Record summary:
This 177-nucleotide RNA was probed chemically with 2A3 and DMS. It was measured as part of the RMDB library M2PK50. 2A3 adducts were read by reverse transcription with SuperScript II with manganese.

RNA sequence: GGGAACGACUCGAGUAGAGUCGAAAAACCUCUAAGUUCGCUUAGAGGUAAUGAACGCUGCAAAAAGCAGCGCGCUCAGCGGAGCACGCAAAAGGAACGCAAGAACACCAUUCUUCGGAAUGGUGAAGAUCUGGAAAUGAUUCGUCAUUUCCAGAUCAAAAGAAACAACAACAACAAC
Reactivity to 2A3 in 0.01 (KOAc 150mM, MgCl2 10mM, bicine 150mM(pH8.5), 24C), signal-to-noise 3, nucleotides 027 to 126: a010c010c000u000c010u010a010a030g000u010u100c170g020c120u000u000a000g000a020g010g000u010a000a050u100g000a110a010c020g000c010u000g020c010a100a130a150a140a210g000c000a010g010c010g000c030g000c010u020c010a070g110c100g210g010a040g040c040a010c040g050c040a030a030a070a020g100g030a090a010c030g010c070a050a060g050a150a000c000a000c000c000a000u000u010c010u000u040c100g100g000a000a000u000g000g000u000g010a000a020
Reactivity to DMS in 0.01 (KOAc 150mM, MgCl2 10mM, bicine 150mM(pH8.5), 24C), signal-to-noise 3, nucleotides 027 to 126: a030c000c000u000c000u000a000a000g010u000u000c210g010c000u000u000a000g010a020g010g000u000a010a030u000g010a110a110c040g000c000u000g020c010a100a090a130a120a140g010c000a040g000c010g020c070g000c020u000c020a120g000c120g000g010a070g030c050a090c100g020c060a030a010a070a040g010g020a010a010c100g020c180a090a090g000a110a210c000a010c010c000a010u000u000c000u000u000c140g020g000a000a000u000g010g010u000g010a030a050